[RMDB]
About this RNA
Structure probing data (2A3 and DMS) for a 177-nucleotide construct. DMS adducts were read by reverse transcription with MarathonRT. The reactions ran in a buffer of 150 mM KOAc, 10 mM MgCl2 and 150 mM bicine (pH 8.5), at 24 C. It was measured as part of the RMDB library OK1LIB.
RNA sequence: GGGAACGACUCGAGUAGAGUCGAAAAUUGCCAAUCUAGCUGCUGACUUGAUAUUGUUGGUGAGCAGUUCGAUAGCAUCAUCAACGUCCUGUCCAGAGUUUAUGGCAGUGUUGAGGGGCAGUGUGGAAUCCUACCCUGGAUUCGUCCAGGGUAGGAUAAAAGAAACAACAACAACAAC
Reactivity to 2A3 in 0.01 (KOAc 150mM, MgCl2 10mM, bicine 150mM(pH8.5), 24C), signal-to-noise 6, nucleotides 027 to 126: u080u040g020c000c000a030a050u000c020u030a010g020c010u020g010c030u030g110a120c000u080u050g040a020u130a140u230u260g050u000u010g000g000u000g010a000g010c020a050g060u110u060c100g080a060u080a160g000c000a190u030c000a010u000c000a010a000c010g110u100c010c020u080g070u090c010c030a040g030a040g120u110u190u130a220u100g000g000c000a000g010u070g020u080u090g020a020g020g020g000g000c030a010g030u040g050u140g120g090a050
Reactivity to DMS in 0.01 (KOAc 150mM, MgCl2 10mM, bicine 150mM(pH8.5), 24C), signal-to-noise 3, nucleotides 027 to 126: u000u010g010c000c000a090a080u010c060u000a180g000c000u000g000c000u020g000a040c000u000u000g000a040u000a120u030u020g010u020u020g000g000u010g020a030g040c040a060g000u010u020c200g010a200u040a120g000c040a100u000c030a020u000c010a000a010c000g000u020c120c030u020g000u020c060c080a040g000a170g010u020u030u030a070u010g000g020c000a020g020u010g000u010u010g010a060g000g020g000g030c030a020g010u020g020u020g000g000a080